[RMDB]
RNA sequence: GGGAACGACUCGAGUAGAGUCGAAAAUGGCCAUGCUUCGGCAUGGCCACUUGCGUAGCUCGCAAAUUUUUUUAGCUACGCUUAAUAAAAAUAUGCGAUAUAAGUUGGGGUUGUUCGCAACCCCAAAUAUUUAUAGGUUGUUCGCAACCUAUAAAUAAAAAGAAACAACAACAACAAC
Reactivity to DMS in 0.01 (KOAc 150mM, MgCl2 10mM, bicine 150mM(pH8.5), 24C), signal-to-noise 1, nucleotides 027 to 126: u010g010g010c000c010a010u000g000c010u000u000c180g020g000c030a010u000g010g020c000c000a000c010u000u010g000c020g020u000a020g000c010u010c090g020c030a030a100a000u000u010u000u000u010u020u010a060g000c010u000a020c010g010c000u000u000a020a060u010a010a090a070a020a010u010a110u010g020c000g010a080u000a090u000a090a100g010u010u000g000g000g020g020u010u010g010u000u020c220g010c010a030a010c020c000c000c000a000a000a030